Source: RMDB library OK3TST, as collected in RNAgym. Chemical mapping of a 207-nucleotide RNA with 2A3 and DMS. Reactivities are given for positions 27 through 156. For DMS, 3,244 sequencing reads were counted. The reactions ran in a buffer of 150 mM KOAc, 10 mM MgCl2 and 150 mM bicine (pH 8.5), at 24 C. Reactivities are rounded to 0.1 and cut off at 0 and 3.
RNA sequence: GGGAACGACUCGAGUAGAGUCGAAAACGCGAUGGAUACGUCCAUCGCGAAUUCGCCCAAGCCGCGGUCGUUAAACUGUGGCACGGUUGUGCCUAGGUGCAACCCUGCUACUAAUGGCGGUACCCCUGCCCAAGCUACCGUCUACGGACGGUAGCAAAGCUUUUAAUACUUUCGAGUAUUAAAAGCUAAAAGAAACAACAACAACAAC
Reactivity to 2A3 in 0.01 (KOAc 150mM, MgCl2 10mM, bicine 150mM(pH8.5), 24C), signal-to-noise 4, nucleotides 027 to 156: c000g000c000g000a000u000g010g000a010u020a060c210g110u020c000c000a000u000c000g010c000g000a000a000u020u010c010g020c000c010c010a030a060g020c010c010g100c120g010g010u020c010g010u020u070a120a170a080c100u100g000u000g010g000c000a000c010g000g000u010u010g000u020g010c010c030u100a210g130g000u010g000c000a000a000c000c000c000u000g000c000u010a000c010u050a110a140u130g030g010c040g020g010u090a080c010c000c000c020u030g000c020c020c020a100a020g000c000u000a000c010c000g000u000c010u010a030c250g080g000a000c000g000g000u010a000g000c000a010a000
Reactivity to DMS in 0.01 (KOAc 150mM, MgCl2 10mM, bicine 150mM(pH8.5), 24C), signal-to-noise 1, nucleotides 027 to 156: c000g050c000g040a000u000g000g020a040u010a040c240g020u000c000c010a000u000c030g010c000g000a000a040u010u000c000g020c020c030c020a150a200g050c010c020g010c130g020g010u000c000g040u010u000a070a070a100c100u020g010u000g020g000c010a000c100g010g000u000u000g020u000g000c000c020u020a160g080g050u000g000c030a030a000c000c010c020u010g010c020u000a060c000u020a070a130u010g010g010c000g000g000u010a080c020c010c010c040u020g020c010c010c070a170a150g000c020u000a030c000c010g010u010c010u010a090c300g090g000a020c000g000g030u010a000g000c010a010a010